[RMDB]
RNA sequence: GGGAACGACUCGAGUAGAGUCGAAAAAGAUCGAUUACGAUCGAUCAAUGAUGCCCCUCACCCACCUCUGAAGAUCCCAGGUGGGCGAGGGAAAGGAGCACGGGAUCACGAGCAGUACGCUGCUCGAAAAAGAACUAGACCUUCGGGUCUAGUUCAAGUUUGCACAGUAGUUCGCUACUGUGCAAACAAAAGAAACAACAACAACAAC
Reactivity to 2A3 in 0.01 (KOAc 150mM, MgCl2 10mM, bicine 150mM(pH8.5), 24C), signal-to-noise 2, nucleotides 027 to 156: a000g000a000u000c020g000a010u060u080a080c130g010a010u010c000g010a020u020c050a010a040u220g040a050u190g060c000c000c000c000u000c000a000c000c030c000a000c020c000u060c050u090g070a040a010g000a030u040c040c000c000a010g000g010u020g000g000g060c010g000a000g000g000g030a010a010a010g120g010a040g010c110a020c130g000g000g000a000u000c000a000c020g010a000g000c000a000g000u070a050c260g010c070u000g030c000u000c000g000a000a030a000a000a000g000a010a000c000u000a000g020a000c000c030u040u130c280g150g000g020u020c000u010a000g000u000u000c000a000a000

Conditions: 150 mM KOAc, 10 mM MgCl2 and 150 mM bicine (pH 8.5), 24 C. Chemical mapping of a 207-nucleotide RNA with 2A3. Reactivities are given for positions 27 through 156. Source: RMDB library M2RFPK, as collected in RNAgym. 2A3 is a SHAPE reagent: it acylates the 2'-hydroxyl of flexible nucleotides of all four kinds. Reactivities are rounded to 0.1 and cut off at 0 and 3. 2A3 adducts were read by reverse transcription with SuperScript II with manganese.